[RMDB]
RNA sequence: GGGAACGACUCGAGUAGAGUCGAAAAGGACGGAAAUAGUAUAUGUUGUGCAAGUGUGUUGAUGUAGUAUAAUAGGUCAAAUCUAAAUUUAUAUCCAACAUAUGAUGCUAGACCUAUCAGCUUAAAAACUACGACCAGUAUUCGUACUGGUCGUAGUAAAAGAAACAACAACAACAAC
Reactivity to 2A3 in 0.01 (KOAc 150mM, MgCl2 10mM, bicine 150mM(pH8.5), 24C), signal-to-noise 2, nucleotides 027 to 126: g110g000a000c080g010g070a020a110a070u240a040g080u030a040u020a040u290g040u020u020g090u070g000c100a130a120g070u070g000u000g000u170u000g030a070u030g000u130a010g030u050a070u050a250a060u030a000g050g000u020c080a030a040a030u000c050u100a030a000a140u080u170u120a150u010a120u230c100c060a010a040c000a130u030a050u180g090a030u080g010c060u060a000g000a000c050c000u010a010u030c000a000g000c000u010u040a000a060a000a000
Reactivity to DMS in 0.01 (KOAc 150mM, MgCl2 10mM, bicine 150mM(pH8.5), 24C), signal-to-noise 2, nucleotides 027 to 126: g030g000a080c040g000g010a070a130a120u040a090g030u000a050u010a060u010g000u000u000g000u000g020c160a060a180g000u000g000u010g000u000u010g000a060u010g010u030a030g000u010a070u000a170a000u000a060g000g000u020c140a010a000a030u020c070u020a000a090a130u060u030u000a030u020a030u010c180c110a020a060c120a010u040a060u010g030a160u030g000c050u030a180g030a100c000c060u000a040u000c130a160g000c070u000u000a000a040a050a050
The record gives the reactivity of an RNA of 177 nucleotides to 2A3 and DMS. The RNA was probed in 150 mM KOAc, 10 mM MgCl2 and 150 mM bicine (pH 8.5) at 24 C. For 2A3, 815 sequencing reads were counted.